[RMDB]
RNA sequence: GGGAACGACUCGAGUAGAGUCGAAAACGUGGUCGACAUAGGUGUUCAUAGGUCCAGAGUCUAUAUUGGGGACAAAUGAGUCGAAUCUAUCGGAGAACGGGAAACGACGCUGGCUGCCUAGACAAAAUCAUCGUUCUAUCUUCGGGUGGAGUGAUGAAAAAGAAACAACAACAACAAC
Reactivity to DMS in 0.01 (KOAc 150mM, MgCl2 10mM, bicine 150mM(pH8.5), 24C), signal-to-noise 2, nucleotides 027 to 126: c080g020u000g000g010u020c040g010a070c070a050u020a050g000g010u000g000u000u000c040a060u020a030g010g000u000c010c020a070g000a100g000u020c090u000a100u030a110u020u000g010g000g010g000a050c060a060a080a050u020g000a060g000u010c030g000a040a100u010c040u010a070u030c000g000g000a300g000a290a300c050g000g000g000a100a180a300c090g000a040c000g000c010u000g000g000c300u010g000c000c000u000a010g010a020c120a030a030a060a070
Reactivity to 2A3 in 0.01 (KOAc 150mM, MgCl2 10mM, bicine 150mM(pH8.5), 24C), signal-to-noise 2, nucleotides 027 to 126: c050g050u050g020g040u050c040g030a080c030a060u110a040g040g030u030g020u060u030c040a040u050a040g000g040u010c010c010a000g010a020g070u050c060u060a160u020a030u080u190g040g050g010g000a000c010a010a060a010u140g010a010g000u020c000g010a010a000u000c010u040a060u060c000g030g030a170g000a250a080c000g010g000g000a040a000a000c050g010a000c000g000c020u000g030g000c040u100g060c000c000u010a020g010a060c040a000a100a010a040